[RMDB]
RNA sequence: GGGAACGACUCGAGUAGAGUCGAAAAAGGGGGUGCGCUUCGUGGAUGUCCGCGGGCUCUCGAAGGGUAAGGGCUAUCAGGGGGUGAUGAAGAGGCACGGGUUCAGCGGCGGUCCGGCGUCGCACGGAGCGCUGUUAUAGUUCGCUAUAACAGCGCUAAAAGAAACAACAACAACAAC
Reactivity to DMS in 0.01 (KOAc 150mM, MgCl2 10mM, bicine 150mM(pH8.5), 24C), signal-to-noise 4, nucleotides 027 to 126: a090g000g010g010g020g020u000g010c080g010c060u000u010c030g030u000g010g000a120u010g020u000c020c040g010c130g020g000g010c030u000c010u000c050g000a110a080g000g000g010u010a070a090g010g010g010c090u010a080u000c090a110g000g000g010g010g020u000g010a090u000g000a080a090g010a080g000g000c070a060c080g010g000g010u010u010c090a100g030c040g020g000c030g000g010u010c060c060g010g000c020g010u000c040g000c040a070c160g010g010
Reactivity to 2A3 in 0.01 (KOAc 150mM, MgCl2 10mM, bicine 150mM(pH8.5), 24C), signal-to-noise 3, nucleotides 027 to 126: a000g040g000g000g010g000u050g000c080g010c060u100u200c050g010u050g050g080a160u200g110u090c000c010g020c080g020g040g020c000u000c020u000c040g030a020a020g050g000g010u100a020a080g000g020g030c040u070a080u260c060a060g020g000g010g000g010u030g030a080u050g030a070a030g040a050g050g010c040a020c030g030g010g000u080u060c010a010g050c010g010g000c020g000g020u060c030c030g030g030c000g030u000c020g000c010a030c020g070g070
Conditions: 150 mM KOAc, 10 mM MgCl2 and 150 mM bicine (pH 8.5), 24 C. An RNA of 177 nucleotides, treated with DMS and 2A3 and read out base by base. For DMS, 6,276 sequencing reads were counted. It was measured as part of the RMDB library OK2TST. DMS adducts were read by reverse transcription with MarathonRT.